[RMDB]
Chemical mapping of a 177-nucleotide RNA with DMS and 2A3.
2A3 adducts were read by reverse transcription with SuperScript II with manganese.
DMS adducts were read by reverse transcription with MarathonRT.
The data come from the RNA Mapping Database (RMDB), library M2PK50.

RNA sequence: GGGAACGACUCGAGUAGAGUCGAAAAAGAAUAGUUUUCGAACUAUUCUCACGACGACCUUGGGAAACCGUGAGGCGCGAUCCCACGCGAUCGUCUGUUCGAACACCUGGUUGUUCGCAACCAGGAACAGAGUGCAGUGUUUCGACACUGCACUCUGAAAAGAAACAACAACAACAAC
Reactivity to DMS in 0.01 (KOAc 150mM, MgCl2 10mM, bicine 150mM(pH8.5), 24C), signal-to-noise 2, nucleotides 027 to 126: a020g020a020a000u010a000g000u000u000u000u010c150g020a040a030c000u000a010u000u000c000u000c060a140c220g010a060c000g020a050c030c010u000u000g000g000g010a010a160a150c300c010g010u010g020a140g000g010c070g010c170g010a240u020c000c000c010a080c120g000c070g010a140u010c020g000u000c020u010g000u010u010c080g010a150a050c270a110c000c000u000g000g020u000u000g010u000u000c270g020c010a000a010c000c000a020g000g020a080a110
Reactivity to 2A3 in 0.01 (KOAc 150mM, MgCl2 10mM, bicine 150mM(pH8.5), 24C), signal-to-noise 1, nucleotides 027 to 126: a000g020a000a000u010a000g040u000u010u020u100c160g020a010a020c000u000a010u000u000c040u040c020a110c150g080a010c040g020a010c000c020u020u080g020g030g060a070a080a080c090c000g050u090g150a140g230g020c050g000c030g090a040u070c000c000c000a010c000g060c050g180a300u020c010g050u000c040u070g080u020u120c050g030a080a000c040a070c040c000u000g010g020u030u010g020u080u000c190g000c050a010a000c000c000a000g000g000a000a000